This 170-nucleotide RNA was probed chemically with DMS and 2A3. It was measured as part of the RMDB library 15KLIB.
[RMDB]
RNA sequence: GGGAACGACUCGAGUAGAGUCGAAAAGCGGUCCUUAGUUCUCUUACUCUUUUCUGUAAAGAGGAGACUGUAGGAUCCGCCGCCCAAGCCCGAACUGAGCCAAGUCCGAGCGAAGGGUCCGCGUGGGAAACUCCUUAGUUCGCUAAGGAGAAAAGAAACAACAACAACAAC
Reactivity to DMS in 0.01 (KOAc 150mM, MgCl2 10mM, bicine 150mM(pH8.5), 24C), signal-to-noise 8, nucleotides 027 to 129: g030c010g010g000u020c000c000u010u030a020g020u040u020c010u020c040u050u050a300c050u000c000u010u020u020u060c220u040g040u100a010a010a010g000a000g000g040a000g020a000c020u010g010u030a020g000g040a030u040c000c010g020c060c000g030c020c010c010a090a160g000c080c030c020g000a070a060c150u010g020a050g050c000c020a080a070g010u030c040c020g000a070g040c030g030a060a040g000g000g000u020c000c000g040c090g020u000g030g010g040a090a100a140
Reactivity to 2A3 in 0.01 (KOAc 150mM, MgCl2 10mM, bicine 150mM(pH8.5), 24C), signal-to-noise 9, nucleotides 027 to 129: g010c020g010g010u020c000c000u020u020a040g020u280u040c010u010c020u060u170a170c010u030c020u060u100u100u070c160u270g260u300a020a000a010g010a000g010g000a000g010a000c010u070g120u140a010g000g000a040u050c030c030g000c000c010g020c000c000c000a030a030g040c000c000c010g040a040a020c040u030g000a020g010c010c020a080a030g030u000c010c000g010a010g010c020g010a030a030g010g000g000u010c010c020g050c040g030u100g020g000g000a030a040a020
Reactivities are rounded to 0.1 and cut off at 0 and 3. 2A3 adducts were read by reverse transcription with SuperScript II with manganese.